[RMDB]
RNA sequence: GGGAACGACUCGAGUAGAGUCGAAAAUUAGAGGUCUCGAUCACAGCGAGACCGGGAGAGACGCUCCCGGCCCGGGUUAGGAACCGGUGCGGCGGGUGGUAUAGGAGCCGGCCGGACCCGGGGAUAAGACAAAAGACAUAUUCGUAUGUCUUUUGUCAAAAGAAACAACAACAACAAC
Reactivity to DMS in 0.01 (KOAc 150mM, MgCl2 10mM, bicine 150mM(pH8.5), 24C), signal-to-noise 3, nucleotides 027 to 126: u010u020a120g010a130g010g000u000c000u000c010g010a070u010c180a110c280a160g000c020g000a040g000a030c010c010g010g000g010a140g000a140g010a110c080g010c030u000c000c000c010g020g010c000c010c000g000g000g010u000u000a100g020g000a110a120c020c000g000g000u000g020c030g000g010c030g010g000g010u000g010g010u010a100u010a140g010g000a290g020c000c020g000g000c000c010g010g010a070c000c000c000g010g000g000g000a020u010a050a130
Reactivity to 2A3 in 0.01 (KOAc 150mM, MgCl2 10mM, bicine 150mM(pH8.5), 24C), signal-to-noise 2, nucleotides 027 to 126: u140u110a060g030a040g080g020u000c000u000c000g040a130u220c070a020c020a150g140c020g000a010g000a010c000c000g020g010g000a050g000a010g000a000c030g020c060u000c000c020c000g080g120c020c000c010g030g000g010u050u140a120g130g060a090a070c030c010g000g020u180g250c030g010g010c020g000g110g040u130g050g070u170a170u110a250g160g000a040g020c000c000g010g020c010c010g020g020a020c020c010c020g020g000g000g000a030u080a110a090